Notes:
Conditions: 150 mM KOAc, 10 mM MgCl2 and 150 mM bicine (pH 8.5), 24 C. The record gives the reactivity of an RNA of 207 nucleotides to 2A3.
[RMDB]
RNA sequence: GGGAACGACUCGAGUAGAGUCGAAAACCAACAACAAUACUACUACCCAUAACAUGAAUAUCUAAACACAACAUAAUCUGAAUCAAUGCAACAGUACAUAGUCUCCUCAUUAGCCUGAUCAGUCUAUCCCUACUAAACCAACUAGGCGAAAACAGCCGCUAAUCAAACGCUUCGGCGUUUGAUUAGCAAAAGAAACAACAACAACAAC
Reactivity to 2A3 in 0.01 (KOAc 150mM, MgCl2 10mM, bicine 150mM(pH8.5), 24C), signal-to-noise 2, nucleotides 027 to 156: c020c000a020a030c040a000a000c000a000a070u110a140c060u040a040c020u030a030c010c000c000a070u050a090a050c020a100u060g010a060a080u090a060u150c060u070a130a190a050c050a000c010a140a070c010a080u120a110a110u120c000u060g070a090a050u040c010a010a070u110g040c000a030a020c010a080g040u010a010c000a050u070a040g020u010c030u030c010c010u040c020a040u070u130a010g010c020c030u010g010a030u040c000a000g100u000c010u030a010u010c000c000c000u000a030c000u040a140a060a060c010c000a040a130c060u120a090g000g010c000g040a160a030a000a030c040a050g080c010c030